This 177-nucleotide RNA was probed chemically with DMS and 2A3.
[RMDB]
RNA sequence: GGGAACGACUCGAGUAGAGUCGAAAAGACGGAAAACUACGAACCUAAGAAGUAGAGGAAGUGUGAGCCGAAUCCUAGGGCUCCUAGGGACGCAUCGUCCGAUGCGGAAUAAACACUAACGUCGAAAGGCAUAUGUAUUCUUCGGAAUACAUAUGCCAAAAGAAACAACAACAACAAC
Reactivity to DMS in 0.01 (KOAc 150mM, MgCl2 10mM, bicine 150mM(pH8.5), 24C), signal-to-noise 3, nucleotides 027 to 126: g000a000c000g030g000a050a080a150a100c030u010a010c030g000a130a080c080c110u020a140a090g020a140a210g050u010a020g010a020g000g000a100a080g000u010g020u000g000a040g000c050c060g000a070a030u050c020c040u010a020g010g010g000c080u020c010c210u090a030g000g000g020a110c030g000c010a030u000c050g000u090c240c190g010a000u000g000c000g000g000a090a030u030a090a070a020c040a040c030u000a070a110c040g010u000c010g000a050a140a120
Reactivity to 2A3 in 0.01 (KOAc 150mM, MgCl2 10mM, bicine 150mM(pH8.5), 24C), signal-to-noise 4, nucleotides 027 to 126: g020a000c000g040g030a020a040a000a080c000u030a000c020g100a120a120c020c020u070a070a060g100a200a000g040u020a000g010a070g050g170a120a050g010u040g050u090g080a060g110c120c050g050a070a090u090c010c030u020a040g000g000g120c020u020c080c000u010a030g030g050g000a010c000g010c000a010u010c020g230u140c140c250g020a010u000g010c000g000g030a020a060u150a040a050a000c020a000c020u080a150a000c010g030u000c030g050a050a050a010
It was measured as part of the RMDB library OK1LIB.